[RMDB]
RNA sequence: GGGAACGACUCGAGUAGAGUCGAAAAUCAUUGAGAUGCUGGGCGCUAUGGUCGUCCUCCUCCGGCUGACCUCCUUCUCAGCUGCUGACCGGCGCCGCACAGGCGGCAUCUCAGUUUCGUGUGCAAAAAAAGAAUGGUCGGUUCGCCGACCAUUCAAGUGUAAACUUGUGUUCGCACAAGUUUACACAAAAGAAACAACAACAACAAC
Reactivity to 2A3 in 0.01 (KOAc 150mM, MgCl2 10mM, bicine 150mM(pH8.5), 24C), signal-to-noise 1, nucleotides 027 to 156: u190c030a030u000u140g020a020g000a000u000g000c010u040g000g010g000c000g000c020u030a150u300g040g050u040c020g020u020c080c100u060c010c000u040c020c050g020g000c000u010g000a010c060c050u130c000c080u290u090c040u010c010a000g010c030u040g000c030u040g000a000c010c000g010g000c000g000c000c060g060c050a020c020a060g130g020c040g000g030c010a000u010c030u010c000a000g000u020u100u150c150g030u140g010u020g110c100a190a070a000a000a020a000a020g000a000a000u000g000g000u000c020g070g040u010u020c100g050c070c000g000a000c010c000a000u000u000c000a000a000
Reactivity to DMS in 0.01 (KOAc 150mM, MgCl2 10mM, bicine 150mM(pH8.5), 24C), signal-to-noise 1, nucleotides 027 to 156: u010c070a070u010u010g010a030g010a030u010g010c010u000g030g000g040c020g040c020u020a050u000g110g020u000c010g040u010c050c020u000c010c020u000c030c010g000g010c020u010g010a050c040c070u010c110c120u000u010c060u000c020a020g050c030u000g000c090u000g000a040c000c000g000g020c000g030c010c000g000c050a060c060a090g050g060c030g010g000c010a010u000c000u000c000a010g020u010u000u000c130g000u000g050u000g000c000a000a000a090a070a130a170a220g010a050a000u000g020g020u000c010g010g000u000u000c300g030c020c010g010a020c010c000a000u000u000c000a010a160